An RNA of 207 nucleotides, treated with DMS and 2A3 and read out base by base. The RNA was probed in 150 mM KOAc, 10 mM MgCl2 and 150 mM bicine (pH 8.5) at 24 C. For 2A3, 2,683 sequencing reads were counted. Reactivities are given for positions 27 through 156. It was measured as part of the RMDB library RNAMAK.

[RMDB]
RNA sequence: GGGAACGACUCGAGUAGAGUCGAAAAGGGGUCUUCUUGUCAGAUCGAAAGUGGCUCUUGGAUUUAUAGGCUGAAGCCUCCACGGCCUAUUGUCAGAGCCAUGAGUAGAUCUUGGAUUUAGAAGACGGAGGCACCCAAAGUCGGCUUCGGCCGACAACCUCGUUAUAUCUUUCGAGAUAUAACGAGGAAAAGAAACAACAACAACAAC
Reactivity to DMS in 0.01 (KOAc 150mM, MgCl2 10mM, bicine 150mM(pH8.5), 24C), signal-to-noise 1, nucleotides 027 to 156: g030g000g050g000u010c000u000u020c000u040u010g010u010c010a080g040a030u000c010g000a050a230a300g040u000g030g000c040u010c000u000u000g080g020a040u010u010u000a020u000a000g020g050c020u000g000a050a140g000c090c040u000c010c070a300c010g000g030c000c000u000a000u000u030g000u000c030a100g010a020g000c010c010a000u000g010a090g010u010a140g000a010u000c020u000u010g030g020a080u000u000u010a050g000a070a040g020a070c050g010g010a110g040g000c030a090c000c000c000a090a080a150g010u000c010g020g020c020u000u010c300g060g030c000c000g040a000c020a020a050
Reactivity to 2A3 in 0.01 (KOAc 150mM, MgCl2 10mM, bicine 150mM(pH8.5), 24C), signal-to-noise 3, nucleotides 027 to 156: g070g000g030g000u020c000u010u010c010u030u040g010u020c020a010g010a010u000c000g030a020a000a010g020u010g010g000c020u020c040u130u210g180g000a090u280u300u130a010u060a000g000g010c000u020g150a160a030g060c020c050u050c050c000a070c010g020g000c000c000u010a000u000u030g010u060c030a000g000a000g000c000c010a000u000g000a030g000u030a000g000a010u000c000u000u020g000g000a010u010u070u110a010g000a000a000g000a000c000g000g000a010g010g040c030a060c020c000c020a080a050a030g010u000c000g010g000c010u060u140c250g100g020c010c000g000a000c000a000a010